RNA sequence: GGGAACGACUCGAGUAGAGUCGAAAAUCCUAAGUCAGUUCGUUUGACGAGAUUUGUCAGCGAACGUGAGGGUCGGAAACGACCCUCUCGCUUGGAUUUAAUCUCCGAGAACUGAUAUGGAAAAAGUGACGUUGGUCGUUCGCGACCAACGUCACAAGGAAUGGAAGUUGUUCGCAACUUCCAUUCCAAAAGAAACAACAACAACAAC
Reactivity to 2A3 in 0.01 (KOAc 150mM, MgCl2 10mM, bicine 150mM(pH8.5), 24C), signal-to-noise 1, nucleotides 027 to 156: u000c000c000u000a050a010g040u030c010a010g000u010u010c050g090u190u240u210g070a120c050g010a000g010a000u020u000u060g060u000c030a040g010c050g070a090a160c140g000u040g030a000g030g020g000u000c000g040g000a090a090a110c050g050a040c020c010c000u010c000u000c000g030c010u000u170g060g000a010u170u000u300a010a030u030c010u000c010c010g100a020g000a050a000c010u020g000a000u000a050u180g010g030a040a040a000a110a090g020u050g000a000c000g000u010u000g040g000u000c020g030u130u180c300g030c000g110a000c000c000a000a000c000g000u000c010a000c000a010a000